[RMDB]
RNA sequence: GGGAACGACUCGAGUAGAGUCGAAAAGGCUCUGGGCCGCGCGCACCGGACCUAGCUAUAGCUAGUACUGCAGCCGUAGAUAGGGAUUGCUGAUGCUGGCGUGUCUGCGCUGGUCAGGGCGGUGACCACACCGAAUUGGGUUCGCCCAAUUCGGUGUAAAAGAAACAACAACAACAAC
Reactivity to 2A3 in 0.01 (KOAc 150mM, MgCl2 10mM, bicine 150mM(pH8.5), 24C), signal-to-noise 2, nucleotides 027 to 126: g090g000c020u000c020u020g010g060g040c030c000g000c010g020c010g000c020a020c000c020g020g080a050c000c050u000a010g010c020u030a020u060a070g000c000u010a020g080u090a190c050u130g100c040a020g020c000c000g030u010a010g040a100u100a040g050g010g090a140u150u100g040c040u140g050a240u300g010c030u060g060g000c070g040u030g040u040c200u230g020c020g030c090u140g030g230u000c000a000g000g000g000c030g000g010u050g020a030c020c000
Reactivity to DMS in 0.01 (KOAc 150mM, MgCl2 10mM, bicine 150mM(pH8.5), 24C), signal-to-noise 2, nucleotides 027 to 126: g010g000c010u000c010u010g030g000g020c020c120g010c040g010c040g020c040a020c010c040g000g000a160c040c000u000a000g000c000u000a010u000a080g010c000u000a100g010u020a100c300u010g030c190a020g010c010c010g020u010a020g000a130u000a040g000g000g020a150u000u000g020c030u020g010a110u010g020c020u000g020g030c150g030u000g000u000c060u030g010c000g010c010u020g020g010u000c010a020g000g010g000c000g010g010u010g000a150c030c000